[RMDB]
This 207-nucleotide RNA was probed chemically with 2A3. Reactivities are given for positions 27 through 156. It was measured as part of the RMDB library OK3TST. Conditions: 150 mM KOAc, 10 mM MgCl2 and 150 mM bicine (pH 8.5), 24 C.
RNA sequence: GGGAACGACUCGAGUAGAGUCGAAAAUAUGAAAAGCCUCUCCGAAGGUUAGGAGUGCAUUAGGUCACUGAAGCGAUGCGAUGUCUGUGAUGUAAGCCGUGCUCCUCCUUUGGCUCUCUCUCAUUUUUGAUAACAACAUGCAAGAGGUUAUCAGAAAGUAUUAGCGCCAUUUCGAUGGCGCUAAUACAAAAGAAACAACAACAACAAC
Reactivity to 2A3 in 0.01 (KOAc 150mM, MgCl2 10mM, bicine 150mM(pH8.5), 24C), signal-to-noise 2, nucleotides 027 to 156: u290a120u070g060a050a020a000a050g000c000c000u070c020u030c000c020g010a010a000g050g010u130u270a000g010g010a000g000u010g000c000a020u040u010a020g010g070u030c000a000c010u060g040a030a000g060c040g170a100u290g020c040g050a060u180g130u080c080u010g110u020g010a030u040g080u290a010a010g040c080c030g000u010g000c000u000c000c000u050c000c010u050u000u010g000g010c000u040c000u020c020u000c000u010c030a090u010u000u000u050u110g030a040u040a060a010c080a030a040c020a080u170g100c030a090a040g110a080g020g120u020u000a000u020c000a030g050a030a100a000